[RMDB]
RNA sequence: GGGAACGACUCGAGUAGAGUCGAAAAGGGCAGAGACACUCCUCACUUCCUAGAUGGGAUGGCGACAGGGAAGAGGCGCUCCUCACUUCCCAGACUGGGCGGCCGGUCAGAGGGGCUCCUCACAUCCAGGUGUUUGAGGGUUCGCCCUCAAACACCUAAAAGAAACAACAACAACAAC
Reactivity to 2A3 in 0.01 (KOAc 150mM, MgCl2 10mM, bicine 150mM(pH8.5), 24C), signal-to-noise 1, nucleotides 027 to 126: g100g000g020c140a050g030a000g000a060c030a040c080u010c000c020u000c020a010c070u080u010c000c000u020a060g020a130u210g020g000g020a000u050g070g000c130g060a030c200a180g070g130g020a150a070g000a000g030g000c030g000c050u030c000c000u000c000a090c070u000u000c000c000c000a000g010a000c020u010g000g110g000c090g170g110c010c030g010g010u000c010a000g000a000g000g000g000g000c010u000c000c000u000c000a010c000a040u050c010c010